Chemical mapping of a 177-nucleotide RNA with DMS and 2A3. For DMS, 1,466 sequencing reads were counted. The 2A3 profile rests on 1,771 reads. Values are in units of 0.01, from 0 to 300, in steps of 10. DMS adducts were read by reverse transcription with MarathonRT. Values cover nucleotides 27 to 126. The reactions ran in a buffer of 150 mM KOAc, 10 mM MgCl2 and 150 mM bicine (pH 8.5), at 24 C. The data come from the RNA Mapping Database (RMDB), library M2PK50.
RNA sequence: GGGAACGACUCGAGUAGAGUCGAAAAACACCGAUCUUCGGAUCGGUGUAAAUAAAAUCAGCGGUUUAAAUUUCGAGCGCAUAACCGCUGAUGCGCUCGAAAAAACAGUUAGGUUCGCCUAACUGAACAUGAUGCACUACUUCGGUAGUGCAUCAUGAAAAGAAACAACAACAACAAC
Reactivity to DMS in 0.01 (KOAc 150mM, MgCl2 10mM, bicine 150mM(pH8.5), 24C), signal-to-noise 1, nucleotides 027 to 126: a110c000a010c010c000g010a010u000c010u000u020c180g030g000a000u000c000g000g000u000g000u010a000a040a040u010a050a040a080a070u000c020a030g040c010g000g000u010u000u010a070a120a110u000u000u000c000g020a000g010c000g040c010a020u020a040a050c040c040g030c040u000g010a000u000g030c000g030c000u000c000g010a010a020a000a060a070a120c000a030g010u000u000a000g000g000u020u000c230g020c000c000u000a010a000c000u000g020a050a080
Reactivity to 2A3 in 0.01 (KOAc 150mM, MgCl2 10mM, bicine 150mM(pH8.5), 24C), signal-to-noise 1, nucleotides 027 to 126: a000c000a000c010c000g010a010u010c020u020u070c210g070g010a000u010c000g030g010u010g000u010a010a000a000u010a000a010a000a050u030c010a010g050c020g070g130u110u190u300a090a220a090u040u080u050c030g000a000g000c000g030c000a000u040a090a050c010c020g020c020u000g000a000u020g000c000g000c000u000c000g000a010a020a000a010a000a010c000a010g000u010u000a000g040g030u020u040c210g050c060c000u000a000a000c000u010g000a010a020